Structure probing data (2A3) for a 207-nucleotide construct.
The reactions ran in a buffer of 150 mM KOAc, 10 mM MgCl2 and 150 mM bicine (pH 8.5), at 24 C.
2A3 adducts were read by reverse transcription with SuperScript II with manganese.
RNA sequence: GGGAACGACUCGAGUAGAGUCGAAAAACAUAACUGCCAACACGCAGUUUGCAUACGCUGCUUAAUUAAUUAAGUAGCCGUUCCAGCCACUGAGCCUGCGCGGUGGUGAGUGAACGUCAUUUUGCAGGAUAGGCCAAGAGCUUCGGUCCGGAGCUGGGAGGUACACACUGUUCGCAGUGUGUACCUCAAAAGAAACAACAACAACAAC
Reactivity to 2A3 in 0.01 (KOAc 150mM, MgCl2 10mM, bicine 150mM(pH8.5), 24C), signal-to-noise 1, nucleotides 027 to 156: a000c060a060u100a050a050c000u010g030c020c040a220a090c180a030c120g000c030a020g000u090u030u100g090c040a140u140a120c060g030c040u000g000c010u030u000a010a010u070u020a020a110u050u000a080a000g020u000a000g040c000c010g000u000u040c000c000a040g000c000c000a000c000u000g020a010g030c020c020u030g020c070g000c030g000g010u000g030g020u040g070a010g000u260g000a010a010c010g060u020c070a110u080u030u000u220g060c020a010g000g050a050u090a020g030g000c010c130a120a030g020a000g150c000u000u000c030g000g170u110c100c130g000g000a010g000c000u020g020g000